[RMDB]
RNA sequence: GGGAACGACUCGAGUAGAGUCGAAAAGGAACAAUCUCAAGAAGAGGAGGAUUCCCCGAGACGCUGACGGAAACCCCGGGAACAAGGAAACAGGAGGAGGAUCGGUAGAAAAGAGCGAGACCUCCGAUCUAUAGGGUAUCUUCGGAUACCCUAUAGAAAAAGAAACAACAACAACAAC
Reactivity to DMS in 0.01 (KOAc 150mM, MgCl2 10mM, bicine 150mM(pH8.5), 24C), signal-to-noise 2, nucleotides 027 to 126: g000g000a110a080c080a140a130u000c040u000c040a130a070g000a120a080g000a020g000g000a070g020g000a210u010u000c020c020c000c020g000a120g010a080c080g020c070u000g010a190c160g010g030a080a100a070c080c030c010c030g020g010g000a050a080c090a070a080g010g000a070a090a100c040a010g010g000a170g000g030a040g020g000a300u000c020g000g030u000a120g010a050a130a050a120g020a060g050c010g000a050g000a070c060c020u010c000c010g000a120

Chemical mapping of a 177-nucleotide RNA with DMS. For DMS, 730 sequencing reads were counted. For DMS the reverse transcriptase was MarathonRT. The reactions ran in a buffer of 150 mM KOAc, 10 mM MgCl2 and 150 mM bicine (pH 8.5), at 24 C.